Structure probing data (2A3 and DMS) for a 177-nucleotide construct. The data come from the RNA Mapping Database (RMDB), library OK1LIB. The RNA was probed in 150 mM KOAc, 10 mM MgCl2 and 150 mM bicine (pH 8.5) at 24 C. The DMS profile rests on 1,408 reads. For 2A3, 680 sequencing reads were counted. High DMS reactivity at an A or C suggests that its Watson-Crick edge is free.
RNA sequence: GGGAACGACUCGAGUAGAGUCGAAAAUUGAUCAAAUUGGGGAAAAAUUAGAGCAGACAUUUUCUGAACUAAUUGAAGCUAAAGAAGACAGUUAUAAAGCUCAAAGAGCGGCAGAGAAAUUAGCUCAAGUCACAGGGUAAUUCGUUACCCUGUGACUAAAAGAAACAACAACAACAAC
Reactivity to 2A3 in 0.01 (KOAc 150mM, MgCl2 10mM, bicine 150mM(pH8.5), 24C), signal-to-noise 1, nucleotides 027 to 126: u040u030g000a030u090c030a000a000a070u030u020g030g000g000g140a000a160a020a120a120u040u060a000g000a050g000c010a000g020a030c040a090u010u130u040u020c000u000g080a100a100c030u000a000a000u000u000g070a060a000g110c100u120a110a000a000g000a070a010g010a050c000a020g000u080u050a110u140a160a170a000g010c000u010c170a120a100a000g030a010g050c000g060g080c000a040g060a000g090a090a040a140u220u130a040g020c050u000c060a000
Reactivity to DMS in 0.01 (KOAc 150mM, MgCl2 10mM, bicine 150mM(pH8.5), 24C), signal-to-noise 1, nucleotides 027 to 126: u060u000g080a150u000c010a070a040a130u000u000g000g020g000g000a010a110a160a060a020u000u000a030g010a070g000c020a010g010a030c300a130u000u010u000u000c000u010g000a090a030c010u040a000a020u000u030g000a080a110g000c020u000a020a030a040g000a120a060g000a100c030a050g000u000u000a110u000a030a110a190g020c010u000c010a050a040a140g000a010g040c060g010g020c070a100g000a180g000a070a010a040u000u030a090g000c010u000c030a130